This 207-nucleotide RNA was probed chemically with 2A3. It was measured as part of the RMDB library M2RFPK. 2A3 adducts were read by reverse transcription with SuperScript II with manganese. The 2A3 profile rests on 570 reads. The reactions ran in a buffer of 150 mM KOAc, 10 mM MgCl2 and 150 mM bicine (pH 8.5), at 24 C.
RNA sequence: GGGAACGACUCGAGUAGAGUCGAAAAGGGAAUGGUGGUUUACCCCGUUAUCAAAUGAUUACCGACCAAUAAUUGGCGAAACUCGUUUCGCGUUGGCUGCCUAAUUCAAGGAAUUAGCGUGCCUACAAAGACAUCAAGAAGUUCGCUUCUUGAUGAAGCAGAUACUCCAGUUCGCUGGAGUAUCUGCAAAAGAAACAACAACAACAAC
Reactivity to 2A3 in 0.01 (KOAc 150mM, MgCl2 10mM, bicine 150mM(pH8.5), 24C), signal-to-noise 2, nucleotides 027 to 156: g000g020g040a240a230u210g050g000u050g000g000u100u100u150a120c020c000c000c060g100u050u140a080u130c090a120a050a050u140g010a030u070u050a050c040c060g120a090c060c030a080a020u210a130a110u090u200g060g000c020g050a040a060a040c100u110c070g120u010u030u000c040g000c000g060u000u030g010g010c050u130g080c030c040u000a000a020u000u000c110a300a150g170g050a080a010u000u000a000g020c040g080u040g010c000c010u020a010c030a050a030a010g030a020c010a000u000c000a000a020g000a000a000g010u040u130c110g030c000u000u000c000u000u000g000a000u000g000a030a010